[RMDB]
RNA sequence: GGGAACGACUCGAGUAGAGUCGAAAAAGCUUCGUACUUUGUUAUGAUGCUCACCAUAUCUUAUAACAAACUAAUUGAUAGUUUGCCUAUAGAUUUGAUGUUUAAUUAAGAUAGGCACGCUCAGCUACAAGUAGUUACACUUCGGUGUAACUACUUGAAAAGAAACAACAACAACAAC
Reactivity to 2A3 in 0.01 (KOAc 150mM, MgCl2 10mM, bicine 150mM(pH8.5), 24C), signal-to-noise 1, nucleotides 027 to 126: a000g000c010u000u020c000g000u000a010c020u200u140u170g050u040u000a010u030g000a010u000g000c000u000c020a020c000c000a010u020a000u000c060u050u140a070u030a170a010c000a040a020a000c010u020a010a030u010u050g060a060u060a050g000u000u000u050g000c000c000u020a030u010a000g100a160u020u020u120g050a030u040g070u050u180u100a080a050u020u020a030a000g020a070u010a000g000g010c010a010c000g000c000u000c000a030g000c010u030a010
Reactivity to DMS in 0.01 (KOAc 150mM, MgCl2 10mM, bicine 150mM(pH8.5), 24C), signal-to-noise 3, nucleotides 027 to 126: a050g010c010u000u000c010g030u000a020c010u010u000u010g010u010u000a060u010g000a020u000g010c080u000c060a130c020c010a060u000a020u000c010u000u000a060u010a060a120c050a020a020a050c020u000a030a180u000u000g010a160u010a020g000u000u010u000g010c060c050u000a060u000a040g010a060u000u000u000g010a070u000g010u000u020u000a090a060u010u010a030a090g000a060u010a020g010g010c000a000c050g010c100u000c080a040g000c050u000a050